[RMDB]
RNA sequence: GGGAACGACUCGAGUAGAGUCGAAAAUAGCCGGGUGUGGUGGCAUGGCCUAUAGUCCCAGCUACUCGAGAGGCUGAGGUGGGCAGAUCCAUUGAGCCCAGGAGGUCGAGGCUGCAGUGAGUUGUGAUCACACCACUGCACUCCAGCCUGGGCGACAAUGGUCCUCAUGAUUCGUCAUGAGGACCAUAAAAGAAACAACAACAACAAC
Reactivity to DMS in 0.01 (KOAc 150mM, MgCl2 10mM, bicine 150mM(pH8.5), 24C), signal-to-noise 1, nucleotides 027 to 156: u010a110g000c050c020g020g000g060u000g000u000g010g000u000g000g020c040a060u000g000g040c040c060u000a140u040a150g010u000c030c030c010a150g000c030u000a030c020u000c000g000a050g030a220g010g010c000u010g010a030g000g010u000g010g000g000c010a070g020a070u010c010c010a120u010u010g000a300g000c000c010c000a040g010g010a130g080g030u020c060g000a010g050g010c050u020g020c020a010g000u010g000a080g070u020u020g020u000g030a170u000c110a130c040a080c010c000a000c020u000g040c020a150c030u000c000c010a140g020c020c000u000g010g010g000c040g000a010c050a070
Reactivity to 2A3 in 0.01 (KOAc 150mM, MgCl2 10mM, bicine 150mM(pH8.5), 24C), signal-to-noise 2, nucleotides 027 to 156: u090a030g030c060c010g020g020g010u160g000u030g020g080u010g000g000c040a060u020g030g050c040c030u090a040u090a170g040u030c000c000c000a000g010c010u040a020c020u040c030g070a070g000a020g070g040c040u070g010a040g080g030u070g010g000g000c040a010g020a050u040c020c000a050u040u130g030a010g000c000c000c030a000g000g010a040g050g090u120c040g010a030g080g000c150u060g000c030a010g000u000g090a160g050u180u050g030u140g120a210u300c130a030c000a000c070c000a010c000u010g000c010a030c010u020c010c000a070g040c000c000u000g010g000g010c000g010a000c000a000
The record gives the reactivity of an RNA of 207 nucleotides to DMS and 2A3. For DMS the reverse transcriptase was MarathonRT. 2A3 adducts were read by reverse transcription with SuperScript II with manganese.